[RMDB]
RNA sequence: GGGAACGACUCGAGUAGAGUCGAAAAGAGACAGGGUUCGCCCUGUCUCAAAGAACGCGAAGAUAACCGAAAUAAAACGGUAUGGUACGCGACCAACAACAAAAACUAAGACCUUCGGGUCUUAGAAGUGAUAUAUACUCUUCGGAGUAUAUAUCACAAAAGAAACAACAACAACAAC
Reactivity to 2A3 in 0.01 (KOAc 150mM, MgCl2 10mM, bicine 150mM(pH8.5), 24C), signal-to-noise 7, nucleotides 027 to 126: g010a000g000a000c010a000g030g000g030u080u100c110g090c010c000c000u010g000u000c000u000c000a000a000a000g010a070a030c010g010c010g020a040a030g020a120u070a110a120c020c030g100a110a140a060u300a030a130a030a020c000g010g010u020a030u050g050g020u130a020c010g000c000g000a020c000c010a010a040c010a020a010c010a000a120a010a010a010c010u010a010a000g010a000c000c010u030u130c300g120g000g000u010c000u000u000a000g000a040a000
Reactivity to DMS in 0.01 (KOAc 150mM, MgCl2 10mM, bicine 150mM(pH8.5), 24C), signal-to-noise 4, nucleotides 027 to 126: g000a000g000a010c000a000g020g000g040u000u020c250g030c000c000c000u000g000u010c000u000c010a030a070a100g010a110a150c030g010c010g010a060a170g000a050u010a100a090c010c010g000a070a070a200u000a080a110a110a150c020g000g000u000a020u000g000g020u000a130c010g010c010g000a160c020c010a040a020c060a020a010c030a050a090a080a070a140c010u010a000a010g000a000c000c000u000u010c210g030g010g010u000c000u000u000a000g000a060a100